Record summary:
The record gives the reactivity of an RNA of 207 nucleotides to DMS and 2A3. As a SHAPE reagent, 2A3 marks flexible, mostly unpaired nucleotides at the ribose 2'-OH. Values are in units of 0.01, from 0 to 300, in steps of 10. In probing experiments dimethyl sulfate is read out at A N1 and C N3, which are open when not base-paired. Source: RMDB library OK3TST, as collected in RNAgym.
RNA sequence: GGGAACGACUCGAGUAGAGUCGAAAAACAACAGAUAGCUGGAACCAGCGUAGAAUUCUACGCAUAUCCAUAGCGAAUGGUACCUGUAAAGAAAAUAAGGCUGGAUGUACAAGUACCAACAGCCGGUUAUGCCAUGGUGAUGUCAAUCACAUAUGCAAUCGUAUUAGGGAUUCGUCCCUAAUACGAUAAAAGAAACAACAACAACAAC
Reactivity to DMS in 0.01 (KOAc 150mM, MgCl2 10mM, bicine 150mM(pH8.5), 24C), signal-to-noise 3, nucleotides 027 to 156: a080c020a110a100c040a080g010a090u000a060g020c020u000g040g000a130a090c140c050a170g020c000g030u000a050g000a230a200u000u000c000u000a020c010g000c010a100u020a060u030c030c060a120u020a060g030c040g020a170a150u000g010g020u010a020c000c000u000g040u000a060a070a130g000a100a120a110a110u000a100a160g010g000c030u000g000g010a150u000g000u000a050c060a040a060g020u000a030c020c010a030a080c040a090g020c010c030g010g030u010u000a070u010g010c030c070a090u010g000g010u000g010a050u000g000u010c170a090a060u000c020a040c010a090u000a050u000g070c050a120
Reactivity to 2A3 in 0.01 (KOAc 150mM, MgCl2 10mM, bicine 150mM(pH8.5), 24C), signal-to-noise 5, nucleotides 027 to 156: a000c040a010a010c020a020g090a150u120a050g010c000u010g040g010a080a140c100c030a080g010c000g010u000a000g050a160a300u300u090c010u010a000c010g010c010a010u030a020u060c020c020a040u090a030g010c020g060a090a030u040g010g000u010a020c010c010u030g060u150a060a150a090g100a060a110a050a060u130a120a020g000g030c000u010g000g070a100u050g020u050a020c020a020a140g030u010a040c000c040a010a070c000a020g000c000c000g000g020u100u050a080u070g040c040c030a020u050g010g050u000g010a030u030g140u160c030a070a030u010c010a010c010a040u120a020u100g000c050a030